[RMDB]
RNA sequence: GGGAACGACUCGAGUAGAGUCGAAAAUUGAAGGUAAAACAGCCUGUGGGUGAAACACACCCACAGGGCCCAUAGGGCGCUAGCACUCUGGUAUCACGGUACCGUUGUGCGCCUGUUUUACCGAAGGUAGGACGAGGGUUCGCCCUCGUCAAAAGAAACAACAACAACAAC
Reactivity to 2A3 in 0.01 (KOAc 150mM, MgCl2 10mM, bicine 150mM(pH8.5), 24C), signal-to-noise 3, nucleotides 027 to 129: u100u080g060a090a040g000g000u000a000a000a000a000c000a000g000c000c000u000g000u000g010g000g010u000g040a040a120a000c180a020c000a000c050c000c000a000c000a000g000g000g000c000c000c010a050u190a090g000g000g000c000g010c050u080a030g010c010a000c000u010c020u010g000g000u010a010u030c030a040c250g160g000u000a000c000c000g000u000u010g000u000g000c000g020c000c000u000g000u000u000u000u000a000c000c000g000a000a000g070g020u100a020g010
Reactivity to DMS in 0.01 (KOAc 150mM, MgCl2 10mM, bicine 150mM(pH8.5), 24C), signal-to-noise 6, nucleotides 027 to 129: u030u030g030a170a150g040g000u000a000a000a000a000c000a040g040c040c000u030g020u020g030g010g000u000g020a110a190a090c280a210c020a030c040c020c010a050c010a020g020g010g050c010c000c000a050u040a160g020g000g020c000g000c040u050a090g060c010a010c020u040c020u040g020g000u000a000u010c040a110c300g000g060u020a000c000c000g000u020u020g020u000g030c000g010c000c000u010g030u000u000u000u000a020c010c010g020a070a070g050g040u060a100g020